Notes:
Conditions: 150 mM KOAc, 10 mM MgCl2 and 150 mM bicine (pH 8.5), 24 C. Chemical mapping of a 177-nucleotide RNA with 2A3. For 2A3 the reverse transcriptase was SuperScript II with manganese.

RNA sequence: GGGAACGACUCGAGUAGAGUCGAAAAUCGUCCCAGGACCACACGAACUCAAGCGGCGCGGUGUGCUUCGCCAGAGUCAGCUUGCCGCCGCGCAGGCGGAAAGCGCUGCGCGUGUAGUGCGCCGACUGCGGUCGUAAUGCUUCGGCAUUACGACCGCAAAAGAAACAACAACAACAAC
Reactivity to 2A3 in 0.01 (KOAc 150mM, MgCl2 10mM, bicine 150mM(pH8.5), 24C), signal-to-noise 1, nucleotides 027 to 126: u140c010g050u020c020c010c000a000g000g080a020c050c040a020c000a010c030g100a200a090c050u070c120a110a070g000c000g060g000c010g010c020g030g000u080g020u040g000c000u020u050c010g000c000c010a000g020a020g040u080c030a050g010c010u010u070g050c020c000g010c020c070g030c070g040c040a020g000g000c000g000g030a030a020a000g000c060g020c000u000g000c030g000c000g020u070g040u090a050g000u050g040c000g000c000c000g040a020c060u080